RNA sequence: GGGAACGACUCGAGUAGAGUCGAAAACACUCCGGGCCGCGAUCAGCCCGGGCUUUCCCUACUUUGGGGCCCAAUGCUGUCGCGAAGAGUUCGGCUCUGUCAGCCCGGCUGGGUCCGGGUGGGGGCCCCCUAGUGCGUAAUUCGUUACGCACUAGGGAAAAGAAACAACAACAACAAC
Reactivity to DMS in 0.01 (KOAc 150mM, MgCl2 10mM, bicine 150mM(pH8.5), 24C), signal-to-noise 2, nucleotides 027 to 126: c140a090c150u070c010c000g020g010g000c040c060g000c110g010a030u030c070a090g010c010c300c160g010g000g000c190u040u060u020c010c010c030u010a050c180u000u040u040g000g010g000g000c000c010c000a060a130u030g010c110u010g000u000c080g000c040g010a050a110g000a050g020u010u030c100g000g000c000u000c010u000g000u010c080a230g010c000c010c000g000g030c000u030g000g000g000u050c000c020g000g000g000u000g000g000g010g000g000c110c040
Reactivity to 2A3 in 0.01 (KOAc 150mM, MgCl2 10mM, bicine 150mM(pH8.5), 24C), signal-to-noise 5, nucleotides 027 to 126: c040a020c010u020c010c000g020g020g000c000c010g040c030g040a120u170c060a010g000c000c030c010g000g000g020c000u050u120u040c000c000c000u060a150c090u100u150u220g020g000g010g000c010c000c000a030a040u160g000c020u030g020u050c020g000c000g050a060a010g020a010g040u060u190c100g090g030c030u010c010u030g280u110c050a030g010c000c020c020g000g000c020u130g080g030g010u060c010c000g020g000g000u030g000g010g000g020g010c000c000